[RMDB]
RNA sequence: GGGAACGACUCGAGUAGAGUCGAAAAAGGGGGGCCUCGUCUGGUGACGGAACUUGCUUCCUGAGCUGGGUGGGGCCGCAGAGACCAGAGAGAAGCGACUGUUUACUAAAAACACAGGUCCGUGCGAAUCAUCUACUUGCUUCGGCAAGUAGAUGAUAAAAGAAACAACAACAACAAC
Reactivity to DMS in 0.01 (KOAc 150mM, MgCl2 10mM, bicine 150mM(pH8.5), 24C), signal-to-noise 4, nucleotides 027 to 126: a090g010g010g000g000g000g010c020c000u000c000g050u010c000u000g000g020u000g000a300c300g010g000a000a000c030u050u020g050c260u000u000c010c010u000g000a300g000c000u000g020g000g010u000g010g000g000g000c010c010g000c030a010g000a100g020a160c020c000a070g000a150g010a070g010a230a120g010c060g020a060c070u010g000u010u010u000a120c150u050a060a050a070a060a110c130a040c060a040g010g000u020c070c050g030u030g000c090g000a140
Reactivity to 2A3 in 0.01 (KOAc 150mM, MgCl2 10mM, bicine 150mM(pH8.5), 24C), signal-to-noise 4, nucleotides 027 to 126: a000g050g000g000g000g000g010c010c000u010c000g000u000c000u000g040g040u100g000a000c010g030g000a020a000c040u140u250g090c060u070u000c000c000u000g020a000g000c000u000g010g000g030u010g040g000g000g000c020c000g000c000a000g040a000g020a050c000c040a040g020a010g000a000g010a210a050g020c050g060a010c010u040g020u060u060u100a160c170u180a110a040a070a070a020c030a010c020a040g000g070u040c070c040g030u040g060c050g060a040
Overview: Conditions: 150 mM KOAc, 10 mM MgCl2 and 150 mM bicine (pH 8.5), 24 C. Chemical mapping of a 177-nucleotide RNA with DMS and 2A3. It was measured as part of the RMDB library RFM100. For 2A3, 2,766 sequencing reads were counted.